An RNA of 177 nucleotides, treated with 2A3 and read out base by base. Reactivities are given for positions 27 through 126. 2A3 adducts were read by reverse transcription with SuperScript II with manganese. The data come from the RNA Mapping Database (RMDB), library OK1LIB.
RNA sequence: GGGAACGACUCGAGUAGAGUCGAAAACUGUGUUUGACUCGAAGGUAAUGUACGAACCUCAAUUUCACUAGAUGAUUCUUCUACUGAGAAUUCAUCACUCCCUUCGGUUCUCGUAUAACUUCCUGUGCGCCCACGCUCAUUUCGAUGAGCGUGGGCGAAAAGAAACAACAACAACAAC
Reactivity to 2A3 in 0.01 (KOAc 150mM, MgCl2 10mM, bicine 150mM(pH8.5), 24C), signal-to-noise 1, nucleotides 027 to 126: c000u000g070u080g050u020u100u030g060a060c020u000c040g000a040a000g010g000u120a140a190u260g050u110a030c040g000a000a040c010c000u080c080a040a090u060u020u040c030a040c020u040a020g070a090u000g000a000u000u000c020u040u000c020u050a250c030u060g030a000g000a000a000u160u140c030a000u000c000a030c020u050c050c000c000u010u230c060g000g000u020u020c030u000c070g020u120a040u000a080a110c000u000u050c000c000u080g010u150g020